[RMDB]
The record gives the reactivity of an RNA of 207 nucleotides to 2A3 and DMS. The DMS profile rests on 3,740 reads.
RNA sequence: GGGAACGACUCGAGUAGAGUCGAAAAUACAUCUUCGAUCUUGACGGCACGCUAUCCGAUGGCACUCACCGCUUGCACCUGCUUCCGAAAAAAGAUCUGCAUCUAACUGAAAGUUGGACGCCUUUCAAUAUGGCGGCUGGUGAUGAUGCGCCAAUUGUGUUGCUGUAUCUUUCGAGAUACAGCAACAAAAAGAAACAACAACAACAAC
Reactivity to 2A3 in 0.01 (KOAc 150mM, MgCl2 10mM, bicine 150mM(pH8.5), 24C), signal-to-noise 3, nucleotides 027 to 156: u220a040c070a090u080c040u100u100c050g100a110u000c040u040u090g050a070c070g000g040c050a030c100g020c020u040a030u130c040c030g130a140u050g010g000c020a000c050u050c010a040c010c010g000c040u040u050g000c000a030c020c010u080g000c000u080u030c010c020g100a120a060a000a000a020a000g040a040u010c060u060g020c000a020u000c010u020a020a020c020u050g150a210a110a020g040u030u030g040g010a020c020g000c000c000u090u160u060c070a080a120u060a080u200g000g020c000g020g000c020u050g010g030u030g000a050u060g000a030u040g030c010g020c040c020a060a100u120u100g110
Reactivity to DMS in 0.01 (KOAc 150mM, MgCl2 10mM, bicine 150mM(pH8.5), 24C), signal-to-noise 2, nucleotides 027 to 156: u020a150c050a120u000c060u000u000c070g010a050u000c040u010u000g010a140c000g010g080c030a050c060g000c030u010a050u000c050c000g030a110u000g020g000c040a050c030u000c010a040c030c000g020c020u020u020g000c020a090c040c030u010g000c040u020u000c050c040g040a000a050a070a080a060a100g000a050u000c030u000g040c050a030u000c030u000a080a140c090u000g000a110a070a190g020u000u010g010g020a020c020g040c000c100u000u000u010c100a090a120u000a060u020g020g010c000g000g000c080u000g020g020u020g020a080u020g010a040u000g030c000g000c030c000a020a160u010u000g040